Source: RMDB library M2RFPK, as collected in RNAgym. The record gives the reactivity of an RNA of 207 nucleotides to 2A3. 2A3 adducts were read by reverse transcription with SuperScript II with manganese. For 2A3, 516 sequencing reads were counted. Reactivities are rounded to 0.1 and cut off at 0 and 3.
[RMDB]
RNA sequence: GGGAACGACUCGAGUAGAGUCGAAAAGUUGAGAGCGUUUAACUUAAGUCUUUUUAAUUAGCUUAAAAAAACUAUAUACAAGUGGUGGUAGUCCGCCACUCUAAGGGGACGCCUUUAGAAGAAGAGGGAAAGGCACUAAGCUUCGGCUUAGUGCCAACAUAACACCAAGCUUCGGCUUGGUGUUAUGAAAAGAAACAACAACAACAAC
Reactivity to 2A3 in 0.01 (KOAc 150mM, MgCl2 10mM, bicine 150mM(pH8.5), 24C), signal-to-noise 1, nucleotides 027 to 156: g080u050u080g080a050g000a010g080c000g000u030u060u110a080a070c050u080u000a040a020g010u080c010u060u140u080u030u130a110a180u130u160a080g010c010u050u050a040a130a010a000a000a000a000c110u180a220u060a010u090a300c020a020a020g000u010g030g030u020g030g000u030a030g170u060c000c000g000c000c020a000c000u010c000u020a040a030g000g000g080g000a000c060g020c010c020u110u120u060a040g040a170a000g000a030a010g020a140g050g050g050a090a110a090g020g000c000a000c010u000a000a000g030c000u020u120c280g030g000c000u030u030a000g000u000g000c010c000a010a000